[RMDB]
RNA sequence: GGGAACGACUCGAGUAGAGUCGAAAAGGAAAGCGCGCGAAUUGGAAACCAGGGCGCCAUAUUACGCCCGCAAGGAAUUGGGCCUUGGUUUUUUGGAAGGAUUAGAUAAUUACCCGGCGCCCGUCAAUCAAUCCUCAAAUUUCGAUUUGAGGAUUGAAAAAGAAACAACAACAACAAC
Reactivity to DMS in 0.01 (KOAc 150mM, MgCl2 10mM, bicine 150mM(pH8.5), 24C), signal-to-noise 3, nucleotides 027 to 126: g000g010a160a140a110g000c100g010c110g030c030g010a100a130u000u000g000g000a030a030a020c000c010a030g000g020g020c010g030c010c000a020u010a050u010u000a100c210g000c090c030c040g010c270a090a160g010g000a070a100u000u000g010g010g020c000c010u000u000g000g010u000u000u000u000u000u000g010g000a110a120g010g010a080u000u000a080g000a120u020a070a070u000u000a100c020c030c000g000g020c040g010c010c040c040g010u000c100a060a080